Annotation:
Chemical mapping of a 177-nucleotide RNA with 2A3. For 2A3 the reverse transcriptase was SuperScript II with manganese. The data come from the RNA Mapping Database (RMDB), library OK1LIB. The 2A3 profile rests on 801 reads.

[RMDB]
RNA sequence: GGGAACGACUCGAGUAGAGUCGAAAACAAACCCGCCAAUCGGGAGCACAUCAAAAUUGUUCACGUCGUGCUCCCCGCAACGACCUGAAGAAAGUUGCGAGACGUGAACUAGCAAAGGCGGGAAUAAGCACGCCUAAUCGUUCGCGAUUAGGCGUGCAAAAGAAACAACAACAACAAC
Reactivity to 2A3 in 0.01 (KOAc 150mM, MgCl2 10mM, bicine 150mM(pH8.5), 24C), signal-to-noise 1, nucleotides 027 to 126: c000a040a030a000c000c000c000g000c000c000a020a080u170c000g000g000g000a000g050c000a090c000a220u300c300a030a000a100a300u260u090g000u010u000c010a000c000g030u030c030g030u010g000c000u000c000c000c000c000g000c000a000a000c000g000a010c000c050u220g040a080a000g120a080a150a010g000u000u000g000c010g000a010g000a000c000g020u000g000a000a000c000u020a020g020c070a110a070a080g000g040c010g000g000g000a000a000u060a010a000